[RMDB]
RNA sequence: GGGAACGACUCGAGUAGAGUCGAAAAGGCACUCAUGGACACCCAUAGAACUCCACGAGUUCACGGUAAAUCUGAUUCACAGAUGUGAACUGAAUACCGUGGAGAAGUGUCCUUCUAUGGGAGUGCAGCAGUGCUGUACAUUCGUGUACGGCACUGCAAAAGAAACAACAACAACAAC
Reactivity to 2A3 in 0.01 (KOAc 150mM, MgCl2 10mM, bicine 150mM(pH8.5), 24C), signal-to-noise 3, nucleotides 027 to 126: g070g000c000a000c010u020c020a110u140g060g020a010c010a030c040c000c000a000u000a010g000a010a010c020u010c030c000a000c010g010a030g190u000u010c000a000c000g010g000u010a050a040a040u000c000u000g070a300u030u010c020a020c010a070g300a300u260g140u000g000a000a010c000u010g000a020a020u020a030c000c000g000u000g000g010a000g000a010a010g010u010g010u010c000c000u000u000c000u000a000u000g000g000g000a000g000u010g010c010a000
Reactivity to DMS in 0.01 (KOAc 150mM, MgCl2 10mM, bicine 150mM(pH8.5), 24C), signal-to-noise 7, nucleotides 027 to 126: g000g010c020a000c010u000c060a140u000g000g010a110c180a140c100c000c000a000u000a000g010a020a040c100u000c180c000a010c000g010a190g020u000u000c000a000c010g000g010u000a010a120a100u000c010u010g010a180u000u000c020a030c010a240g010a100u020g020u000g000a020a010c020u000g010a030a160u000a010c050c000g020u000g010g000a000g000a040a230g010u000g000u000c100c230u000u000c010u000a000u000g000g000g010a030g010u000g010c010a110